[RMDB]
Chemical mapping of a 177-nucleotide RNA with 2A3 and DMS. The reactions ran in a buffer of 150 mM KOAc, 10 mM MgCl2 and 150 mM bicine (pH 8.5), at 24 C. DMS adducts were read by reverse transcription with MarathonRT.

RNA sequence: GGGAACGACUCGAGUAGAGUCGAAAAAGCGCUCCUUACGAGGAGCGCAUGUCCUCUGGGGACUCAGCUUGCUCUGGCUGCUGGAUUGAAUUAGCUGCAGGACCAAGAUGAGCCCUUGGUGGAGAAACUUGCUGAGAAGUUUCGACUUCUCAGCAAGAAAAGAAACAACAACAACAAC
Reactivity to 2A3 in 0.01 (KOAc 150mM, MgCl2 10mM, bicine 150mM(pH8.5), 24C), signal-to-noise 4, nucleotides 027 to 126: a000g010c000g000c010u010c020c000u040u020a090c300g080a060g000g000a000g000c000g000c010a000u040g050u000c000c000u000c010u010g000g040g000g120a250c000u000c000a010g000c000u000u020g000c010u030c010u020g180g000c000u010g000c000u010g040g120a180u060u230g090a140a130u130u060a050g010c020u040g000c000a000g020g060a040c060c010a010a020g010a020u010g000a000g000c000c000c000u010u040g000g020u070g020g020a050g020a030a070a040
Reactivity to DMS in 0.01 (KOAc 150mM, MgCl2 10mM, bicine 150mM(pH8.5), 24C), signal-to-noise 3, nucleotides 027 to 126: a100g000c010g000c000u010c000c000u000u030a100c140g020a020g020g000a020g030c000g010c000a000u040g010u000c010c000u010c010u010g000g000g000g000a090c010u010c020a010g000c010u000u000g010c300u000c010u000g020g000c000u000g010c000u010g020g010a180u000u010g000a040a300u010u010a040g000c010u010g000c000a080g020g000a010c060c010a040a000g000a030u000g010a010g000c020c000c010u000u020g010g000u020g010g020a150g000a080a040a160